[RMDB]
The data come from the RNA Mapping Database (RMDB), library OK3TST. Structure probing data (DMS and 2A3) for a 207-nucleotide construct. The 2A3 profile rests on 14,204 reads. Reactivities are given for positions 27 through 156.

RNA sequence: GGGAACGACUCGAGUAGAGUCGAAAAGAUGAUACUGUGUGCACCCCUGGCUUUGAAGGCGAAUUGAACGACUUCAUCAAACCUGAGAGCAAAUCACUACUUGCAUGCAGCGUUAAAAGAGCAUUCAUUACUGGUGAGAUUGAUGAUGCUGUACAUGUGUAUUAGGACAAUUCGUUGUCCUAAUACAAAAAGAAACAACAACAACAAC
Reactivity to DMS in 0.01 (KOAc 150mM, MgCl2 10mM, bicine 150mM(pH8.5), 24C), signal-to-noise 6, nucleotides 027 to 156: g020a100u000g010a150u000a020c010u000g020u000g040u000g000c050a120c050c020c010c030u000g010g000c020u000u000u000g010a070a030g030g020c020g030a140a240u000u010g020a100a170c040g000a080c040u000u000c020a050u010c090a080a060a050c020c010u010g010a180g010a070g010c030a050a060a140u000c080a070c040u000a070c130u000u010g010c030a060u000g020c020a050g020c030g010u000u000a050a080a070a100g000a110g010c030a070u010u000c030a070u000u000a050c050u010g000g010u000g000a080g000a090u000u010g000a050u010g010a050u000g030c020u010g000u010a060c090a090u010g020
Reactivity to 2A3 in 0.01 (KOAc 150mM, MgCl2 10mM, bicine 150mM(pH8.5), 24C), signal-to-noise 9, nucleotides 027 to 156: g060a020u130g000a020u050a080c010u010g020u010g010u010g110c070a050c000c010c000c010u020g030g000c020u030u020u050g020a010a000g030g000c050g060a130a130u100u130g040a090a030c040g130a090c050u040u010c030a060u040c020a040a060a070c010c020u070g020a050g000a010g080c030a030a050a060u140c070a040c090u130a040c030u070u040g010c000a020u050g000c000a010g010c030g030u050u070a060a090a040a020g080a020g000c020a040u060u130c010a010u000u090a030c030u040g060g010u070g030a050g010a060u040u050g010a020u010g000a000u020g020c030u040g050u110a060c050a110u160g040